An RNA of 177 nucleotides, treated with 2A3 and DMS and read out base by base. Reactivities are rounded to 0.1 and cut off at 0 and 3. The 2A3 profile rests on 12,683 reads. 2A3 adducts were read by reverse transcription with SuperScript II with manganese. Conditions: 150 mM KOAc, 10 mM MgCl2 and 150 mM bicine (pH 8.5), 24 C.
RNA sequence: GGGAACGACUCGAGUAGAGUCGAAAAGAUAUGGAGUGUCCCACAGCUUGAUGACCUCGGAAACGAGCAAGAGCGGUGGGAGCACUCCUAAGUCAAACGCGAAGUUGUGUUCGCACAACUUCGCGAACGGAACAAUACAGUUCGCUGUAUUGUUCCGAAAAGAAACAACAACAACAAC
Reactivity to 2A3 in 0.01 (KOAc 150mM, MgCl2 10mM, bicine 150mM(pH8.5), 24C), signal-to-noise 4, nucleotides 027 to 126: g030a020u080a050u160g010g000a000g010u010g030u040c010c010c020a000c000a000g000c000u090u030g030a130u130g040a300c030c000u020c000g000g020a080a120a060c010g000a010g010c030a170a210g000a000g020c030g000g000u020g000g020g020a050g020c000a000c000u000c000c000u000a040a000g020u010c030a060a040a060c020g000c000g010a010a020g000u010u010g010u010g010u090u160c300g050c120a010c000a010a000c000u010u010c000g010c000g000a000a000
Reactivity to DMS in 0.01 (KOAc 150mM, MgCl2 10mM, bicine 150mM(pH8.5), 24C), signal-to-noise 5, nucleotides 027 to 126: g010a030u000a300u000g000g000a010g010u000g010u000c000c000c000a000c000a030g020c010u000u000g000a090u010g000a060c300c010u000c000g000g000a130a120a170c020g010a010g020c030a070a120g000a010g010c010g000g070u000g000g000g000a020g010c000a010c010u000c000c000u000a010a060g010u000c040a090a090a200c030g000c000g010a010a010g010u000u010g010u000g010u000u010c220g010c000a010c000a000a010c000u000u000c010g030c000g010a010a050